[RMDB]
RNA sequence: GGGAACGACUCGAGUAGAGUCGAAAACAAGGUCCUUAUGUAGCUGGAAACGGAUAUAUCUCAUAUGUGGCGUGCAGAGAGAUAAGUUUCUUACUUACUAGAUAUGAAUCGGUGCCAGGAGGGACGAUCAAGGGAUCGUCUUCGGGCGAUCUCUUGAAAAAGAAACAACAACAACAAC
Reactivity to 2A3 in 0.01 (KOAc 150mM, MgCl2 10mM, bicine 150mM(pH8.5), 24C), signal-to-noise 1, nucleotides 027 to 126: c060a060a040g190g020u000c000c010u050u020a170u260g120u100a020g110c060u040g010g020a000a190a000c000g050g060a000u010a000u020a020u080c060u030c030a080u160a060u300g130u070g100g070c080g020u090g000c010a030g010a000g010a010g020a050u010a050a010g000u000u010u000c000u010u000a010c000u010u000a000c000u030a030g040a060u020a020u000g050a070a020u030c020g000g000u050g100c000c040a050g020g190a100g000g000g030a030c110g040a120